Conditions: 150 mM KOAc, 10 mM MgCl2 and 150 mM bicine (pH 8.5), 24 C. The record gives the reactivity of an RNA of 177 nucleotides to 2A3 and DMS. For 2A3 the reverse transcriptase was SuperScript II with manganese. The 2A3 profile rests on 1,329 reads. DMS adducts were read by reverse transcription with MarathonRT.
[RMDB]
RNA sequence: GGGAACGACUCGAGUAGAGUCGAAAAGCCUAACAGUUCGCUGUUAGGCAAAUGCACAGACAUCGCAACUGUGAAAAACACAACAGAAGUGUCUAUGCGAGGAUCGUUGCGUCUUCGGACGCAACAAAGUAUAAAAUCGCUUCGGCGAUUUUAUACUAAAAGAAACAACAACAACAAC
Reactivity to 2A3 in 0.01 (KOAc 150mM, MgCl2 10mM, bicine 150mM(pH8.5), 24C), signal-to-noise 1, nucleotides 027 to 126: g010c000c000u000a000a000c000a020g110u110u140c160g050c110u000g000u010u000a000g000g000c000a010a010a010u060g010c020a000c000a000g040a000c030a040u080c080g000c060a060a150c030u020g000u030g070a100a020a020a030a020c060a030c060a110a140c020a030g090a130a000g110u000g000u020c030u020a000u020g010c000g050a030g060g030a080u100c070g000u020u010g000c000g020u000c000u040u010c120g130g000a010c020g000c000a000a000c020a000a000
Reactivity to DMS in 0.01 (KOAc 150mM, MgCl2 10mM, bicine 150mM(pH8.5), 24C), signal-to-noise 2, nucleotides 027 to 126: g030c000c000u000a000a040c000a000g000u010u010c240g040c020u010g010u000u000a000g010g010c000a010a030a060u010g010c000a000c010a040g000a030c000a010u000c210g010c200a110a090c140u000g000u000g010a020a090a120a110a150c070a030c070a070a040c070a050g010a120a060g020u000g000u000c000u000a040u000g010c010g000a060g020g010a100u030c100g000u010u000g000c030g000u000c000u000u040c210g010g010a010c000g010c000a000a000c000a050a050